[RMDB]
RNA sequence: GGGAACGACUCGAGUAGAGUCGAAAAGUGAGGAUUGGGGUACCCAGGCCUGCCUGACUGUGCAUCCUGAGAAACUCAAAGCCACCACUGACUGUAGCCACCAUGAUCAGCUUUAUAUCUGAUGAUCUCGUUUGACUCAUACCCUAACCCCAUGAAAAUUAUGCGAUUAGUUCGCUAAUCGCAUAAUAAAAGAAACAACAACAACAAC
Reactivity to 2A3 in 0.01 (KOAc 150mM, MgCl2 10mM, bicine 150mM(pH8.5), 24C), signal-to-noise 5, nucleotides 027 to 156: g050u030g010a080g040g020a060u030u070g010g020g000g010u050a050c010c000c010a020g020g010c010c040u050g020c010c020u080g090a120c070u090g030u070g030c000a040u070c020c010u050g010a040g070a150a190a020c040u000c050a070a050a050g020c000c000a060c030c000a040c050u050g050a030c010u040g050u120a020g030c030c020a030c010c020a070u120g020a070u040c010a000g030c030u040u180u160a180u070a070u160c030u050g040a060u030g030a030u060c020u000c050g050u050u060u050g030a050c000u000c040a030u060a120c000c000c000u020a040a080c020c020c010c020a020u140g050a010a110a040
Reactivity to DMS in 0.01 (KOAc 150mM, MgCl2 10mM, bicine 150mM(pH8.5), 24C), signal-to-noise 3, nucleotides 027 to 156: g020u010g000a180g010g020a220u000u000g010g020g010g010u000a080c010c020c030a090g010g010c050c070u000g040c030c040u020g000a090c100u010g020u010g000c020a210u000c020c020u010g020a090g010a080a090a110c020u000c040a040a050a110g020c020c020a080c030c050a050c100u000g020a070c020u020g010u010a070g020c020c020a040c050c000a050u000g020a030u010c020a030g010c060u000u010u010a120u010a110u030c110u000g010a070u000g000a080u000c030u000c050g010u010u000u000g010a070c020u000c010a130u000a060c000c020c020u000a070a160c010c000c010c040a080u000g000a060a090a060